The data come from the RNA Mapping Database (RMDB), library OK2TST. The record gives the reactivity of an RNA of 177 nucleotides to 2A3 and DMS. DMS adducts were read by reverse transcription with MarathonRT. For 2A3, 45,953 sequencing reads were counted. Conditions: 150 mM KOAc, 10 mM MgCl2 and 150 mM bicine (pH 8.5), 24 C. Reactivities are given for positions 27 through 126.
RNA sequence: GGGAACGACUCGAGUAGAGUCGAAAAUGAGGCUGGGUUCCUCCUGUACCGUGGUUAUAACAUUCCACAGUUGGUUGCGCAAUGCAUGGGGAAUGUGGAAGACGUGCUGAAAGGGAGGCAGAUGCCCUACGAUUAAUGAUUUCGAUCAUUAAUCGUAAAAAGAAACAACAACAACAAC
Reactivity to 2A3 in 0.01 (KOAc 150mM, MgCl2 10mM, bicine 150mM(pH8.5), 24C), signal-to-noise 9, nucleotides 027 to 126: u150g020a070g070g020c030u040g030g080g040u140u110c000c000u010c000c010u030g030u060a030c010c030g010u020g020g010u090u060a100u030a170a030c010a020u030u000c010c010a030c010a080g060u130u130g180g060u140u180g040c100g000c110a150a140u220g010c060a070u040g010g000g000g050a020a010u010g010u010g020g010a090a060g030a020c050g080u130g000c020u050g100a290a020a020g010g000g000a000g010g000c010a030g020a070u130g000c000c000c000
Reactivity to DMS in 0.01 (KOAc 150mM, MgCl2 10mM, bicine 150mM(pH8.5), 24C), signal-to-noise 9, nucleotides 027 to 126: u010g010a100g020g010c020u000g010g020g010u010u010c010c000u000c010c010u000g010u000a140c040c070g010u000g020g020u000u000a130u010a170a040c040a050u000u000c000c000a050c010a060g000u000u000g010g010u010u010g020c220g010c090a080a050u010g010c080a100u000g000g010g010g000a030a010u000g010u000g000g010a140a170g000a030c020g040u010g010c030u000g000a060a070a250g000g000g010a020g010g020c160a080g000a100u010g010c000c000c030